Record summary: An RNA of 207 nucleotides, treated with 2A3 and read out base by base. It was measured as part of the RMDB library M2RFPK. For 2A3, 524 sequencing reads were counted.

[RMDB]
RNA sequence: GGGAACGACUCGAGUAGAGUCGAAAAGUCCUGCCAUGAGACCGCAACGAGAGCAUGUCGCAUCGAAUGGACUCGGGGAGUCGGCAGCUUGCCCGACGGAUGAGCGCCUAAUGCCGGCAUUCGGGAAAAUAGACUGGAUAGUUCGCUAUCCAGUCAACUUGGGUAUUUCCUUCGGGAAAUACCCAAGAAAAGAAACAACAACAACAAC
Reactivity to 2A3 in 0.01 (KOAc 150mM, MgCl2 10mM, bicine 150mM(pH8.5), 24C), signal-to-noise 1, nucleotides 027 to 156: g050u000c000c000u010g020c020c000a080u090g010a010g010a030c060c040g000c130a060a060c110g080a020g080a050g180c020a080u210g010u050c080g000c040a060u050c060g070a000a030u050g050g010a020c010u000c010g050g000g000g000a060g020u030c010g030g060c020a010g060c010u070u090g020c000c050c060g120a070c060g020g040a070u070g040a060g010c080g030c010c040u140a130a070u140g050c060c030g000g000c000a000u050u110c030g090g000g000a000a060a000a140u180a060g000a000c000u000g010g000a000u000a000g000u000u110c120g000c050u000a000u000c000c000a000g000u000c000a000a010
Values are in units of 0.01, from 0 to 300, in steps of 10. For 2A3 the reverse transcriptase was SuperScript II with manganese.